[RMDB]
The record gives the reactivity of an RNA of 177 nucleotides to 2A3 and DMS.
DMS adducts were read by reverse transcription with MarathonRT.
The reactions ran in a buffer of 150 mM KOAc, 10 mM MgCl2 and 150 mM bicine (pH 8.5), at 24 C.
For 2A3 the reverse transcriptase was SuperScript II with manganese.

RNA sequence: GGGAACGACUCGAGUAGAGUCGAAAAUCUUAGCGUUUCGACGCUAAGAAAACGUGCUGGAGGAGGUGGAAAGCUCGGCAUUAAAGGGAUAAAAACAUCUUCAUAUAGGGUCGUUCGCGACCCUAAAUCACUAUAAGUAUUUCGAUACUUAUAGUGAAAAAGAAACAACAACAACAAC
Reactivity to 2A3 in 0.01 (KOAc 150mM, MgCl2 10mM, bicine 150mM(pH8.5), 24C), signal-to-noise 6, nucleotides 027 to 126: u000c000u000u000a000g000c000g010u000u040u100c220g080a010c000g000c000u000a010a000g000a000a000a000a000c030g030u060g020c030u050g030g090a080g020g030a050g020g050u070g010g040a070a020a000g030c010u020c020g010g010c010a010u060u150a070a030a040g070g010g020a060u120a120a140a020a020a020c010a060u050c000u140u070c060a030u170a020u050a200g010g000g000u000c000g010u030u030c100g000c000g040a000c000c000c000u000a000a000a000
Reactivity to DMS in 0.01 (KOAc 150mM, MgCl2 10mM, bicine 150mM(pH8.5), 24C), signal-to-noise 7, nucleotides 027 to 126: u000c000u000u000a000g010c000g010u000u000u010c180g020a030c000g020c010u000a000a010g000a020a040a110a100c110g010u000g010c040u010g010g010a100g000g000a050g020g020u000g000g000a060a080a120g010c040u000c070g010g000c070a060u010u010a060a070a130g000g010g000a070u000a030a050a070a090a080c110a050u010c030u000u000c070a100u010a170u000a010g000g010g010u000c000g020u000u010c190g000c010g010a020c010c000c000u000a000a020a070